Source: RMDB library OK3TST, as collected in RNAgym. Chemical mapping of a 207-nucleotide RNA with 2A3 and DMS. Conditions: 150 mM KOAc, 10 mM MgCl2 and 150 mM bicine (pH 8.5), 24 C.
RNA sequence: GGGAACGACUCGAGUAGAGUCGAAAAAUCAAUCAACCCUGUGACAUUCUUCUCCUGGACAAUGAGUCCCAUCAUCUCUCCACCAUGCACCUUGUGACCCCCUCCUCUGCUGAGGAUAACCACCUUUAACUGUAACUUUCCACGCCUACCCAAGCCACACUACUAUCCCAUUCGUGGGAUAGUAGUGAAAAGAAACAACAACAACAAC
Reactivity to 2A3 in 0.01 (KOAc 150mM, MgCl2 10mM, bicine 150mM(pH8.5), 24C), signal-to-noise 2, nucleotides 027 to 156: a000u080c050a030a000u050c020a050a090c000c000c000u030g050u070g050a040c060a150u100u040c040u050u030c020u040c020c030u030g000g030a020c050a080a140u140g020a030g030u010c000c020c000a050u060c000a030u010c040u000c010u010c030c000a030c000c010a020u070g010c040a030c010c060u060u090g040u100g170a100c010c000c020c020c020u010c000c000u000c010u050g080c050u070g030a010g010g000a020u010a060a000c030c020a040c010c000u030u160u030a060a030c020u040g000u050a040a010c010u050u060u000c000c030a020c030g010c000c000u010a010c000c010c000a010a010g030c020c010a020
Reactivity to DMS in 0.01 (KOAc 150mM, MgCl2 10mM, bicine 150mM(pH8.5), 24C), signal-to-noise 2, nucleotides 027 to 156: a080u000c070a110a120u000c080a070a130c050c010c010u020g020u000g010a140c040a070u010u010c050u000u000c020u000c000c010u000g020g000a120c040a120a110u010g010a160g020u000c020c010c050a170u000c080a090u010c020u000c020u020c000c030a080c020c010a070u000g090c010a110c020c020u010u000g010u020g020a220c020c040c000c020c030u000c030c020u020c020u010g010c120u000g030a080g010g050a090u000a030a090c050c000a030c040c020u010u000u000a030a120c030u000g020u000a060a090c050u000u000u000c010c010a040c050g000c030c000u000a080c010c010c000a070a080g020c050c070a180